[RMDB]
RNA sequence: GGGAACGACUCGAGUAGAGUCGAAAAGGAUCCGGGAGGCGGAAGAAACAAAAAACAACCUGAUGCAGGUAGCCAGUGAGCAUAUUGCGCCGCUUCAGGAUGCUGCAGAUCUGGAAAUUGCAACGGACAUAAUGAGAAUCUUCGGAUUCUCAUUAUGAAAAGAAACAACAACAACAAC
Reactivity to 2A3 in 0.01 (KOAc 150mM, MgCl2 10mM, bicine 150mM(pH8.5), 24C), signal-to-noise 3, nucleotides 027 to 126: g020g010a030u030c040c030g070g150g040a030g020g030c030g040g050a070a030g040a060a150a030c080a040a130a010a030a010a010c030a010a030c000c010u030g030a070u140g030c030a050g020g030u030a050g010c010c020a100g050u060g090a060g030c060a040u050a120u210u200g010c030g010c000c000g020c000u010u010c000a010g000g020a040u030g020c010u020g000c020a010g000a190u030c020u100g070g000a070a100a060u110u080g000c030a050a050c040g030g000a010
Reactivity to DMS in 0.01 (KOAc 150mM, MgCl2 10mM, bicine 150mM(pH8.5), 24C), signal-to-noise 4, nucleotides 027 to 126: g000g010a080u000c020c030g000g010g010a040g010g000c070g000g010a090a070g000a110a080a110c120a010a030a090a080a050a080c100a070a070c040c010u000g010a110u000g030c030a050g010g000u000a090g010c060c060a090g010u000g000a150g000c060a110u000a070u010u010g020c030g010c000c020g010c040u000u020c050a110g000g000a050u000g000c020u010g000c090a040g000a060u000c050u000g010g000a030a050a080u010u000g000c060a060a080c070g000g020a250

An RNA of 177 nucleotides, treated with 2A3 and DMS and read out base by base. The data come from the RNA Mapping Database (RMDB), library RFMREP. For DMS, 3,675 sequencing reads were counted. Conditions: 150 mM KOAc, 10 mM MgCl2 and 150 mM bicine (pH 8.5), 24 C.